[RMDB]
RNA sequence: GGGAACGACUCGAGUAGAGUCGAAAAUUUGGGAGCUUUUUGUAUUUCAAAGACACCAUGAGUGAUAUUCACAUAAAGGAUCGGUUUUUAGGAUAUCAAAAAUGCUGUGAGAUGAUGGGCAUAGAACCACGGUCUAGUAUUUCGAUACUAGACCGUGAAAAGAAACAACAACAACAAC
Reactivity to 2A3 in 0.01 (KOAc 150mM, MgCl2 10mM, bicine 150mM(pH8.5), 24C), signal-to-noise 1, nucleotides 027 to 126: u030u030u040g070g020g000a000g100c060u070u030u010u120u040g110u090a250u050u090u110c020a000a070a050g010a000c020a000c060c060a010u070g040a040g040u050g030a030u040a120u260u090c030a040c000a080u210a030a050a030g140g000a080u100c120g060g030u000u000u010u010u100a090g000g060a000u000a020u260c000a000a030a000a030a070u030g000c030u040g050u050g060a070g000a050u100g000a000u040g020g000g020c050a020u030a170g050a060a010c010
Reactivity to DMS in 0.01 (KOAc 150mM, MgCl2 10mM, bicine 150mM(pH8.5), 24C), signal-to-noise 2, nucleotides 027 to 126: u000u000u000g010g010g000a050g010c020u000u010u020u000u000g010u000a050u010u000u000c030a020a000a080g000a050c050a110c020c020a060u010g010a150g030u000g000a080u010a080u020u000c010a030c050a090u010a090a060a070g010g010a100u010c170g020g030u000u010u000u000u000a070g000g010a010u000a040u020c030a000a030a040a030a050u010g010c030u000g030u010g010a120g010a100u000g000a060u000g010g000g000c090a090u000a060g000a080a100c140

Chemical mapping of a 177-nucleotide RNA with 2A3 and DMS. The reactions ran in a buffer of 150 mM KOAc, 10 mM MgCl2 and 150 mM bicine (pH 8.5), at 24 C. For 2A3, 968 sequencing reads were counted.